[RMDB]
RNA sequence: GGGAACGACUCGAGUAGAGUCGAAAAAUUACGUGGCUAAACAUGCGCGUGCUGGUUACAAUGGUGCGCACAAUUUUGCAGUAUGACAUCUCUCGCACAAUGUGUAGGCAACUCUAUUGUGCGUUAGCUGCAUAUUUCCAUAGAGUCGACAGUGACAAACAUCUCCCAAAUUCGUUUGGGAGAUGUUAAAAGAAACAACAACAACAAC
Reactivity to DMS in 0.01 (KOAc 150mM, MgCl2 10mM, bicine 150mM(pH8.5), 24C), signal-to-noise 4, nucleotides 027 to 156: a120u000u010a030c060g030u010g010g010c030u000a050a060a070c050a110u000g020c020g000c010g070u000g010c010u000g010g020u000u010a160c230a120a130u010g030g010u010g020c010g000c020a020c010a060a110u000u000u000u000g030c040a140g020u010a050u010g010a070c040a090u010c050u000c060u000c010g000c000a030c010a020a010u010g020u010g010u010a040g010g000c220a100a180c060u000c000u000a030u000u000g020u000g050c010g000u010u000a040g000c050u000g010c000a080u000a060u000u000u000c040c020a180u010a060g000a150g020u010c030g010a140c140a090g030u000g000a050c020a070
Reactivity to 2A3 in 0.01 (KOAc 150mM, MgCl2 10mM, bicine 150mM(pH8.5), 24C), signal-to-noise 6, nucleotides 027 to 156: a010u220u170a080c230g050u080g060g000c030u060a050a090a030c060a080u070g010c020g000c010g060u030g000c020u040g020g100u190u100a080c100a140a140u250g010g000u030g030c010g030c020a010c030a100a080u070u080u110u070g010c010a000g000u020a040u060g050a110c000a040u020c020u000c000u000c020g000c000a000c000a000a010u080g010u030g060u300a060g090g000c060a070a100c030u000c000u050a000u010u000g000u000g000c000g000u010u010a010g000c000u000g010c000a010u020a040u030u090u000c030c010a040u050a090g080a020g040u010c010g020a060c050a110g050u050g100a020c040a020
About this RNA:
Chemical mapping of a 207-nucleotide RNA with DMS and 2A3. The data come from the RNA Mapping Database (RMDB), library OK3TST. For 2A3, 4,885 sequencing reads were counted. The reactions ran in a buffer of 150 mM KOAc, 10 mM MgCl2 and 150 mM bicine (pH 8.5), at 24 C. DMS adducts were read by reverse transcription with MarathonRT. For 2A3 the reverse transcriptase was SuperScript II with manganese. For DMS, 9,830 sequencing reads were counted.